[RMDB]
RNA sequence: GGGAACGACUCGAGUAGAGUCGAAAAGUUGUGUAACUUCAUUUAAAUGAAUUGAAACAAAUUUAAUACAAGUGGAUGUAGGAUAACCGUCCGUCCUUUACAUUGGUAUAAAAGUGAUCUAAAAGUCGGCAGGGACGAGUCUUCGGACUCGUCCCAACCAUUCCUACUAGUUCGCUAGUAGGAAUGGAAAAGAAACAACAACAACAAC
Reactivity to DMS in 0.01 (KOAc 150mM, MgCl2 10mM, bicine 150mM(pH8.5), 24C), signal-to-noise 1, nucleotides 027 to 156: g030u000u000g010u010g010u010a130a030c020u000u000c000a080u010u000u010a060a120a110u020g000a050a050u000u000g020a150a140a200c060a070a100a080u000u000u000a150a140u010a060c010a060a030g030u020g000g100a090u010g060u000a050g030g000a060u000a020a130c030c080g040u000c100c060g010u000c020c000u000u000u000a070c000a040u000u000g010g070u020a100u010a030a080a060a100g030u000g000a050u010c030u000a040a050a070a080g010u000c040g030g030c050a130g000g070g000a060c010g020a030g000u000c000u000u000c300g100g020a000c020u000c000g050u000c000c000c020a000a020
Reactivity to 2A3 in 0.01 (KOAc 150mM, MgCl2 10mM, bicine 150mM(pH8.5), 24C), signal-to-noise 2, nucleotides 027 to 156: g060u010u060g040u010g040u050a050a100c090u060u100c060a060u020u120u270a080a170a120u100g020a010a060u090u060g020a050a030a020c020a010a160a010u210u220u170a190a070u060a080c060a140a030g030u060g060g030a040u080g020u140a030g000g010a000u010a120a100c000c040g000u010c020c020g010u000c020c000u120u100u010a040c010a020u020u130g030g010u130a020u060a150a060a000a000g070u080g030a030u010c060u100a040a020a030a130g040u110c070g030g000c050a100g000g000g000a000c010g000a000g000u020c020u010u050c190g000g000a000c010u000c000g000u000c010c000c000a000a000